[RMDB]
RNA sequence: GGGAACGACUCGAGUAGAGUCGAAAAAACUUCACAAGCGACAACAACAGAAUCCGCUGGGGCAGAUGCUAAUCAGACACAUACAGCGAGAAAAACCCGUGAUUCUGGUACGGAUGUGUCUGAGAGUAACGCACAGACAGGUAUCGAUGCACUCUCACUACAAAUACAGCUUCGGCUGUAUUUGUAGAAAAGAAACAACAACAACAAC
Reactivity to DMS in 0.01 (KOAc 150mM, MgCl2 10mM, bicine 150mM(pH8.5), 24C), signal-to-noise 1, nucleotides 027 to 156: a040a030c020u000u000c050a170c020a140a120g010c010g000a090c080a050a110c040a120a130c010a070g000a140a090u010c050c010g030c010u000g050g000g000g000c000a060g000a160u000g010c090u030a110a110u000c010a010g000a030c050a000c000a050u000a070c050a220g020c050g010a130g000a040a090a030a090a060c000c060c060g000u010g000a300u000u010c080u030g000g050u010a050c000g040g000a080u010g020u000g000u000c020u010g000a010g010a080g050u000a060a070c140g000c030a040c030a080g010a120c080a010g000g010u000a090u000c020g000a210u010g000c010a140c080u000c020u010c020a230
Reactivity to 2A3 in 0.01 (KOAc 150mM, MgCl2 10mM, bicine 150mM(pH8.5), 24C), signal-to-noise 3, nucleotides 027 to 156: a000a000c190u230u080c170a170c090a210a080g040c000g180a100c070a230a020c010a080a000c020a120g070a060a060u030c050c010g010c050u050g010g000g140g000c010a040g020a140u130g040c000u020a110a130u020c000a000g000a010c020a000c000a010u080a070c040a030g080c080g100a070g080a040a120a010a010a030c020c040c000g050u090g040a120u090u050c030u140g040g030u040a030c080g090g030a020u040g000u000g000u010c000u010g000a000g000a000g010u040a110a020c040g000c040a000c010a020g140a040c020a020g010g060u060a040u120c050g030a040u090g030c040a040c060u010c000u010c020a020
Structure probing data (DMS and 2A3) for a 207-nucleotide construct. For DMS, 1,794 sequencing reads were counted. As a SHAPE reagent, 2A3 marks flexible, mostly unpaired nucleotides at the ribose 2'-OH. The data come from the RNA Mapping Database (RMDB), library OK3TST. The 2A3 profile rests on 1,264 reads.